[RMDB]
Chemical mapping of a 177-nucleotide RNA with DMS and 2A3. Reactivities are given for positions 27 through 126. The reactions ran in a buffer of 150 mM KOAc, 10 mM MgCl2 and 150 mM bicine (pH 8.5), at 24 C. The DMS profile rests on 6,934 reads. DMS adducts were read by reverse transcription with MarathonRT.
RNA sequence: GGGAACGACUCGAGUAGAGUCGAAAAGAUAUGGAGCGCAAGUCUUCGAGGAUCUAUGGGUAGUCGGAAACGACAAACCAUAGGGAGAAGUCACCGCUCCUAAGUCAAAGACAAGUUCGCUUGUCAAGUCAUUCUUAAUGUUCGCAUUAAGAAUGACAAAAGAAACAACAACAACAAC
Reactivity to DMS in 0.01 (KOAc 150mM, MgCl2 10mM, bicine 150mM(pH8.5), 24C), signal-to-noise 6, nucleotides 027 to 126: g000a020u000a300u000g000g010a010g010c010g020c090a100a170g000u000c000u000u010c000g000a080g010g000a030u010c000u000a010u000g010g010g010u000a300g020u000c000g000g000a100a070a110c000g010a010c000a030a170a300c000c010a010u000a000g000g000g000a020g000a010a010g000u000c030a120c300c010g000c000u000c000c000u000a000a070g010u010c020a090a100a120g000a010c000a000a010g010u000u010c270g010c010u000u000g010u000c010a090a130
Reactivity to 2A3 in 0.01 (KOAc 150mM, MgCl2 10mM, bicine 150mM(pH8.5), 24C), signal-to-noise 6, nucleotides 027 to 126: g020a010u060a020u160g010g010a000g010c030g000c080a300a300g040u010c010u010u000c010g020a280g020g000a010u000c010u010a010u020g010g000g040u070a080g000u010c010g000g000a060a060a050c000g000a000c010a020a250a010c000c000a000u000a000g000g000g000a010g000a010a000g010u010c020a020c150c000g000c010u010c000c000u000a050a010g010u000c030a110a050a050g010a010c010a010a000g010u040u150c270g100c140u010u020g000u000c030a010a010